[RMDB]
Structure probing data (2A3 and DMS) for a 207-nucleotide construct.
Conditions: 150 mM KOAc, 10 mM MgCl2 and 150 mM bicine (pH 8.5), 24 C.
High DMS reactivity at an A or C suggests that its Watson-Crick edge is free.
For DMS, 10,081 sequencing reads were counted.
High 2A3 reactivity points to a flexible backbone, as in loops and unpaired stretches.

RNA sequence: GGGAACGACUCGAGUAGAGUCGAAAAUACUUAGUACGCGCGUAGUUGCAGGCAUUCCGGGUGCAGCAACUGACACGGAAGACUUUUCCCAGAGUGUGCGCUUCAACUGGCGUGCUGAGUAGUGCACGAAUUGCACGUACGUUCGCGUACGUGCAAACUGAUUUCUUACAUUCGUGUAAGAAAUCAGAAAAGAAACAACAACAACAAC
Reactivity to 2A3 in 0.01 (KOAc 150mM, MgCl2 10mM, bicine 150mM(pH8.5), 24C), signal-to-noise 7, nucleotides 027 to 156: u060a000c000u010u000a010g000u000a000c000g020c010g000c050g120u110a020g000u020u010g010c040a070g060g000c010a030u050u050c060c100g090g040g000u040g050c040a030g010c020a070a080c040u070g100a050c040a010c140g050g060a040a020g140a200c020u080u080u040u030c010c000c010a000g020a020g040u080g000u020g020c110g030c000u010u030c050a140a110c030u040g040g000c000g000u010g010c000u000g000a000g010u040a020g020u040g040c060a020c100g070a090a120u050u010g000c000a000c000g000u000a000c000g010u010u040c210g000c000g060u000a000c010g000u000g000c000a000a000a000
Reactivity to DMS in 0.01 (KOAc 150mM, MgCl2 10mM, bicine 150mM(pH8.5), 24C), signal-to-noise 3, nucleotides 027 to 156: u000a020c060u010u000a060g020u000a050c000g040c010g010c110g000u000a070g000u000u000g000c040a110g020g000c010a060u000u010c030c210g000g020g070u000g000c040a300g010c030a060a090c050u010g020a110c060a120c070g010g020a130a090g020a120c080u000u000u000u010c010c000c000a180g000a090g010u000g020u000g010c060g000c030u000u000c030a060a070c050u000g000g000c020g000u000g000c000u000g000a060g020u000a050g020u000g020c040a070c030g000a100a170u000u000g000c020a020c000g000u000a000c010g030u000u000c300g030c050g020u000a010c000g010u000g000c000a000a000a050